[RMDB]
Background
Structure probing data (2A3 and DMS) for a 177-nucleotide construct. 2A3 adducts were read by reverse transcription with SuperScript II with manganese. The RNA was probed in 150 mM KOAc, 10 mM MgCl2 and 150 mM bicine (pH 8.5) at 24 C. The data come from the RNA Mapping Database (RMDB), library VIROID.
RNA sequence: GGGAACGACUCGAGUAGAGUCGAAAAUGGAACCGCAGUUGGUUCCUCGGAACUAAACUCGUGGUUCCUGUGGUUCACACCUGACCUCCUGAGCAGAAAAGAAAAAAGAAGGCGGCUCGGAGGAGCGGCCUAAUGUAUGGUUCGCCAUACAUUAGGCAAAAGAAACAACAACAACAAC
Reactivity to 2A3 in 0.01 (KOAc 150mM, MgCl2 10mM, bicine 150mM(pH8.5), 24C), signal-to-noise 6, nucleotides 027 to 126: u040g000g000a000a000c000c000g010c010a000g010u030u020g020g010u010u010c000c000u000c100g060g010a010a000c000u130a260a050a030c010u100c140g010u010g020g000u000u010c000c000u010g030u040g020g060u100u120c070a040c020a020c120c020u070g090a140c000c000u000c000c030u150g010a000g010c030a010g150a110a150a120a020g190a050a240a070a080a020a010g070a060a030g150g070c110g040g000c020u000c010g010g010a010g000g010a020g030c060g080
Reactivity to DMS in 0.01 (KOAc 150mM, MgCl2 10mM, bicine 150mM(pH8.5), 24C), signal-to-noise 6, nucleotides 027 to 126: u010g010g010a010a000c000c000g030c010a030g010u000u000g010g000u000u000c000c020u000c290g020g000a010a010c000u000a040a020a010c010u000c150g030u000g010g010u000u000c000c000u000g010u010g010g010u000u000c100a100c120a140c040c030u000g010a130c010c020u000c000c010u010g020a020g010c020a100g000a090a060a090a120g020a020a070a090a090a100a080g000a130a110g010g010c130g010g010c000u000c000g000g010a040g010g000a050g010c150g010